RNA sequence: GGGAACGACUCGAGUAGAGUCGAAAAUUGCUUGCCUGUGAGCCCAGCUACUUGGGAGGCUGAGGUGAGAGGAUUGCUUGAGCCCAGGAAUUCAAGGCUGCAGUGCACUAUGAUUGUGCCUGUGAAUAGCCACUGCACUAUAGCCUGGACAACACAGUAAUUUUAAGACCUUCGGGUCUUAAAAUUAAAAAGAAACAACAACAACAAC
Reactivity to 2A3 in 0.01 (KOAc 150mM, MgCl2 10mM, bicine 150mM(pH8.5), 24C), signal-to-noise 1, nucleotides 027 to 156: u050u050g010c030u000u050g010c000c000u070g040u130g150a010g020c000c050c000a000g030c030u080a130c060u090u060g120g000g020a090g020g000c000u000g050a080g020g010u000g010a080g000a010g000g050a040u020u090g090c110u110u050g020a000g000c000c060c000a010g090g060a090a100u210u110c040a060a090g010g020c000u020g000c010a030g000u090g290c010a010c020u040a080u300g130a190u230u230g000u030g030c000c000u030g030u010g020a050a070u110a080g010c010c000a000c030u030g030c020a000c060u020a010u100a130g010c010c000u000g010g020a010c020a070a000c030a000c000a000g030
Reactivity to DMS in 0.01 (KOAc 150mM, MgCl2 10mM, bicine 150mM(pH8.5), 24C), signal-to-noise 1, nucleotides 027 to 156: u000u000g000c000u010u000g020c030c010u000g000u000g000a250g000c010c010c030a120g030c030u000a050c120u010u000g000g020g000a070g000g000c000u020g020a060g020g050u000g000a120g020a070g020g000a110u000u000g010c010u000u000g010a300g040c000c010c040a100g000g030a110a120u020u000c040a050a090g020g020c050u010g000c030a030g010u010g030c090a000c030u010a110u000g000a190u000u040g010u000g020c120c030u030g000u000g030a140a090u020a020g010c100c000a030c010u000g010c010a120c070u000a080u000a210g000c030c000u000g070g020a090c030a110a170c090a060c080a090g030